RNA sequence: GGGAACGACUCGAGUAGAGUCGAAAAACUGAUUAGUAGAUUAAAGAAAAACCAACAUACACUCAUCUCAUAUUAUCGUAUUUUUUGAGUAUUUUAAUUGCAGGUAAUCAUGAGCACUACACCAACACCAAUCAUAGUGUUUCGACACUAUGAUUGGAAAAGAAACAACAACAACAAC
Reactivity to DMS in 0.01 (KOAc 150mM, MgCl2 10mM, bicine 150mM(pH8.5), 24C), signal-to-noise 2, nucleotides 027 to 126: a120c060u000g010a050u020u000a090g000u000a120g000a130u000u010a060a100a120g010a070a060a060a070a100c050c050a080a140c120a120u000a060c070a070c030u010c060a020u000c020u000c060a040u000a080u000u000a030u000c090g000u000a010u000u000u000u010u010u000g000a030g000u000a030u000u010u000u000a020a030u000u000g010c050a020g000g010u000a030a100u010c100a070u000g020a120g020c040a020c020u010a020c050a040c050c060a020a040c080a140
Reactivity to 2A3 in 0.01 (KOAc 150mM, MgCl2 10mM, bicine 150mM(pH8.5), 24C), signal-to-noise 3, nucleotides 027 to 126: a000c050u050g020a070u100u090a040g020u040a060g040a120u110u100a170a050a060g070a040a130a050a020a010c020c010a020a020c030a070u170a030c040a010c050u030c020a070u020c020u010c020a010u070a100u190u120a130u110c040g010u030a130u020u050u010u000u030u040g000a000g000u030a110u010u050u010u050a080a050u100u050g040c030a000g030g090u100a080a040u060c040a030u060g050a020g000c020a010c040u020a020c020a010c010c030a010a030c030a000